An RNA of 177 nucleotides, treated with 2A3 and read out base by base. Conditions: 150 mM KOAc, 10 mM MgCl2 and 150 mM bicine (pH 8.5), 24 C. The 2A3 profile rests on 308 reads. Values cover nucleotides 27 to 126.
[RMDB]
RNA sequence: GGGAACGACUCGAGUAGAGUCGAAAAUUAUAAGCAGGAAUGAGCGAUCCACGACGUUGAUAUUCGAGGAUUCGGCUAACAAUCGCCAUGGAUUGUGGACCAGCCAUUGGUCGCGGAAUGUAGGCCGGGCCUGGUCCGUAUUCGUACGGACCAGGCCAAAAGAAACAACAACAACAAC
Reactivity to 2A3 in 0.01 (KOAc 150mM, MgCl2 10mM, bicine 150mM(pH8.5), 24C), signal-to-noise 1, nucleotides 027 to 126: u070u000a060u100a300a010g110c230a060g140g190a070a060u150g000a100g090c010g150a070u100c000c000a000c100g090a000c030g010u000u150g010a000u100a260u080u040c040g000a000g090g020a000u140u230c080g030g010c000u000a010a030c000a150a000u120c010g000c080c010a060u070g040g040a120u150u000g120u040g030g000a030c070c070a000g000c090c090a070u260u120g000g000u000c000g000c000g000g080a000a000u100g000u090a010g040g000c000c000g010